[RMDB]
RNA sequence: GGGAACGACUCGAGUAGAGUCGAAAAACUGCGGUAUUCGUACCGCAGUACAUAAAAAGGAUAAAAUACCAGUAGCCCGUAACGCAAGCGAGCACUACUGGCGCAAGAACCACUUCGGUGGUUCUAACAUGAUAGUAGUGUUCGCACUACUAUCAUGAAAAGAAACAACAACAACAAC
Reactivity to DMS in 0.01 (KOAc 150mM, MgCl2 10mM, bicine 150mM(pH8.5), 24C), signal-to-noise 9, nucleotides 027 to 126: a030c000u000g000c010g020g010u000a020u000u010c170g020u000a000c000c000g010c000a000g010u000a020c130a060u010a030a060a070a100a090g010g010a150u010a060a070a090a120u010a120c010c010a030g010u000a030g010c120c050c300g010u010a050a060c120g000c280a080a120g000c010g000a070g000c130a070c030u000a000c000u000g000g000c110g010c180a090a020g010a000a010c000c000a010c000u000u010c140g020g020u000g000g010u000u000c000u000a040a110
Reactivity to 2A3 in 0.01 (KOAc 150mM, MgCl2 10mM, bicine 150mM(pH8.5), 24C), signal-to-noise 9, nucleotides 027 to 126: a000c000u010g000c000g010g000u020a040u020u090c160g030u040a020c000c000g000c000a000g000u010a000c000a000u300a020a130a020a020a020g160g020a070u200a190a170a070a030u170a110c010c010a010g010u010a020g060c010c030c030g030u050a200a040c080g010c170a060a130g060c020g070a020g020c030a010c080u020a000c000u020g010g000c010g010c030a040a010g000a000a000c000c000a010c010u040u040c160g090g000u000g000g000u000u000c000u000a000a000